[RMDB]
RNA sequence: GGGAACGACUCGAGUAGAGUCGAAAAGUUUUCCUUGGACUCAGUGUUACGUAUUAUUCUUAGCUACCUUUAACUAGGUAUUUUUCUAACAUGUAAGCUAUCGUAAAACAACAUUCAAUUUAUCAUUCCUUGCUAUAGAAUUCGUUCUAUAGCAAGGAAAAGAAACAACAACAACAAC
Reactivity to DMS in 0.01 (KOAc 150mM, MgCl2 10mM, bicine 150mM(pH8.5), 24C), signal-to-noise 2, nucleotides 027 to 126: g000u000u020u000u000c010c000u010u010g010g030a070c050u000c140a190g000u000g000u010u010a010c090g010u010a080u010u000a030u010u000c030u000u000a010g000c160u000a050c160c020u000u060u020a060a120c060u010a000g000g000u000a020u000u000u010u000u010c040u000a010a030c120a050u000g000u000a050a080g000c140u000a030u010c050g000u000a020a050a080a010c040a030a160c300a100u010u000c080a060a120u030u000u000a100u020c090a200u000u000
Reactivity to 2A3 in 0.01 (KOAc 150mM, MgCl2 10mM, bicine 150mM(pH8.5), 24C), signal-to-noise 7, nucleotides 027 to 126: g010u030u020u040u050c000c000u020u060g040g000a040c020u010c080a030g010u000g040u080u060a000c070g030u040a060u100u030a050u130u050c040u030u070a030g010c020u040a060c020c030u100u090u090a100a110c180u030a030g020g000u030a040u020u070u010u010u010c020u010a050a030c030a050u130g050u100a030a040g000c050u040a020u110c050g090u110a010a050a030a070c040a020a020c010a040u070u140c030a080a140u050u150u150a180u130c070a040u010u000
An RNA of 177 nucleotides, treated with DMS and 2A3 and read out base by base.